[RMDB]
RNA sequence: GGGAACGACUCGAGUAGAGUCGAAAAGGCUGAUGUCUCCUAACCUUUAUCAAUGGGGGCACUCGGUCGUGCUGUGGGUAGAAAUUUUAUUUCGUGCCUACCUUAGACGCUUGUCGUCGGGAGUAUGUGGGACUGAUGAACUUCGGUUCAUCAGUAACCUACCUAAAUUGUUCGCAAUUUAGGUAGGAAAAGAAACAACAACAACAAC
Reactivity to DMS in 0.01 (KOAc 150mM, MgCl2 10mM, bicine 150mM(pH8.5), 24C), signal-to-noise 3, nucleotides 027 to 156: g000g010c000u010g000a050u010g000u000c010u000c000c000u030a110a160c120c080u000u000u010a140u010c120a130a120u000g010g010g030g030g000c010a020c060u000c020g040g010u000c000g020u000g020c030u000g000u000g000g050g040u000a270g000a040a040a060u000u010u000u000a090u010u030u000c000g020u010g040c030c000u000a040c010c050u000u000a120g010a050c020g000c060u000u000g030u010c010g020u010c000g000g020g000a110g020u000a050u000g000u000g020g010g010a080c000u000g010a000u010g020a020a020c000u010u000c300g050g010u010u000c000a020u000c000a020g010u000a010a180
Reactivity to 2A3 in 0.01 (KOAc 150mM, MgCl2 10mM, bicine 150mM(pH8.5), 24C), signal-to-noise 8, nucleotides 027 to 156: g010g000c000u010g000a020u010g010u030c000u030c010c010u070a110a150c040c050u170u260u210a260u300c150a120a130u160g010g010g000g000g000c010a020c080u010c000g020g000u010c030g020u060g010c070u090g000u050g010g000g000u020a030g100a010a040a020u150u220u140u150a150u040u060u170c050g030u100g010c000c010u020a030c000c000u040u050a050g010a010c010g050c060u130u300g060u300c010g000u000c000g000g040g000a060g030u080a130u200g060u110g020g010g050a010c000u000g000a000u000g000a000a000c000u030u040c140g070g000u010u000c000a000u000c000a000g000u000a000a000